Chemical mapping of a 177-nucleotide RNA with DMS and 2A3. The 2A3 profile rests on 1,677 reads. The data come from the RNA Mapping Database (RMDB), library M2PK50. DMS adducts were read by reverse transcription with MarathonRT.
RNA sequence: GGGAACGACUCGAGUAGAGUCGAAAAUCCUCAGGGUUCGCCCUGAGGAAAACGCUCAACUCAUGGAGCGCACGACGGAUCACCAUCGAUUCCACAUGAGAAAAAGAACUUGCUUCGGCAAGUUCAACGUAUUUGUACCCUUCGGGGUACAAAUACGAAAAGAAACAACAACAACAAC
Reactivity to DMS in 0.01 (KOAc 150mM, MgCl2 10mM, bicine 150mM(pH8.5), 24C), signal-to-noise 1, nucleotides 027 to 126: u010c000c000u000c010a010g000g000g020u000u030c270g030c030c000c020u000g000a010g010g010a000a010a030a040c010g010c010u000c010a100a070c000u000c010a000u000g010g000a010g000c000g020c130a150c020g000a030c010g010g010a220u010c290a080c060c010a070u000c030g000a070u000u010c040c010a070c040a010u000g000a020g010a130a050a060a120a120g000a010a000c000u000u000g040c000u000u010c280g040g000c010a020a000g010u000u020c000a120a040
Reactivity to 2A3 in 0.01 (KOAc 150mM, MgCl2 10mM, bicine 150mM(pH8.5), 24C), signal-to-noise 1, nucleotides 027 to 126: u010c000c000u000c000a000g050g020g010u020u120c220g090c010c000c000u000g000a000g040g030a000a000a000a020c010g000c010u000c000a070a110c000u000c040a010u030g020g020a020g000c040g060c060a020c070g140a030c050g050g000a090u110c050a060c260c020a160u120c060g040a010u070u010c020c050a040c000a060u000g000a000g120a080a110a000a010a000g000a000a000c010u000u010g000c010u020u020c130g080g000c010a000a000g000u000u000c000a000a000